This 177-nucleotide RNA was probed chemically with 2A3 and DMS. Values cover nucleotides 27 to 126.
RNA sequence: GGGAACGACUCGAGUAGAGUCGAAAAUGCCUACGCAUUUUUAAUGGCCAAGGAUGGAAUAACCAAACUGGCUGAUGUUGAAGCGGACGUCGCAGCACGUGCUGAUGACGAAGGCUUCAUCACAUUAGUAAUAUAGCAGGUUCGCCUGCUAUAUUACAAAAGAAACAACAACAACAAC
Reactivity to 2A3 in 0.01 (KOAc 150mM, MgCl2 10mM, bicine 150mM(pH8.5), 24C), signal-to-noise 6, nucleotides 027 to 126: u020g010c000c040u090a070c150g000c010a010u010u010u000u030u200a160a140u200g010g000c010c020a080a050g030g000a020u040g000g050a180a200u150a210a100c000c000a000a010a020c010u010g000g030c010u040g080a080u090g000u020u010g000a010a000g000c000g030g070a000c010g000u000c010g000c010a010g010c010a030c220g120u240g000c010u020g010a260u080g000a010c000g000a080a020g020g000c000u000u000c000a000u000c000a010c010a030u060u130a030
Reactivity to DMS in 0.01 (KOAc 150mM, MgCl2 10mM, bicine 150mM(pH8.5), 24C), signal-to-noise 6, nucleotides 027 to 126: u000g000c000c170u010a170c280g000c020a010u020u010u000u010u000a070a140u010g000g010c000c000a040a080g010g000a300u000g000g010a210a160u010a130a100c010c010a010a060a200c030u000g010g010c000u010g010a070u010g010u000u000g000a010a000g010c000g020g010a300c010g000u000c000g000c000a000g000c000a240c300g010u010g010c010u000g000a060u020g020a010c000g020a020a300g010g000c000u000u000c000a010u000c030a050c090a080u000u020a120

Notes: For 2A3 the reverse transcriptase was SuperScript II with manganese. Source: RMDB library 15KREP, as collected in RNAgym. The reactions ran in a buffer of 150 mM KOAc, 10 mM MgCl2 and 150 mM bicine (pH 8.5), at 24 C. For DMS the reverse transcriptase was MarathonRT.